[RMDB]
RNA sequence: GGGAACGACUCGAGUAGAGUCGAAAACAGCGCGCACACGCACACAGUGCGCCGUUAUCUUCUCCGGCUUGCGUGCAUGCUGCCUUCCGCAAAGCUGCAGCGCGGCGCUCUGGAGGCCUUGCCCCGCGCUUUGUACAUCUUUCGAGAUGUACAAAGCAAAAGAAACAACAACAACAAC
Reactivity to DMS in 0.01 (KOAc 150mM, MgCl2 10mM, bicine 150mM(pH8.5), 24C), signal-to-noise 8, nucleotides 027 to 126: c070a080g020c130g020c010g010c030a040c030a090c160g020c120a070c120a060c100a110g010u000g010c020g010c020c040g010u010u000a060u010c100u010u010c020u010c020c010g000g020c190u030u020g010c010g030u010g000c020a070u030g000c020u010g000c040c060u010u000c080c100g010c130a060a080a100g000c080u010g010c040a030g020c070g020c060g000g000c040g000c010u010c030u000g010g010a060g010g000c060c050u010u010g010c020c010c010c050g010c150
Reactivity to 2A3 in 0.01 (KOAc 150mM, MgCl2 10mM, bicine 150mM(pH8.5), 24C), signal-to-noise 9, nucleotides 027 to 126: c040a010g030c020g000c000g010c080a010c010a020c080g130c040a030c020a010c030a110g010u010g010c000g000c000c010g010u030u080a120u070c110u150u020c010u010c010c000g040g010c100u090u140g010c010g020u040g070c020a060u120g000c010u030g000c020c000u080u090c070c070g070c100a050a080a030g030c060u090g000c050a040g030c010g000c010g070g000c020g000c010u020c020u050g030g010a020g010g010c010c030u040u090g020c010c000c000c010g040c000
An RNA of 177 nucleotides, treated with DMS and 2A3 and read out base by base.
Reactivities are rounded to 0.1 and cut off at 0 and 3.
The reactions ran in a buffer of 150 mM KOAc, 10 mM MgCl2 and 150 mM bicine (pH 8.5), at 24 C.
For 2A3 the reverse transcriptase was SuperScript II with manganese.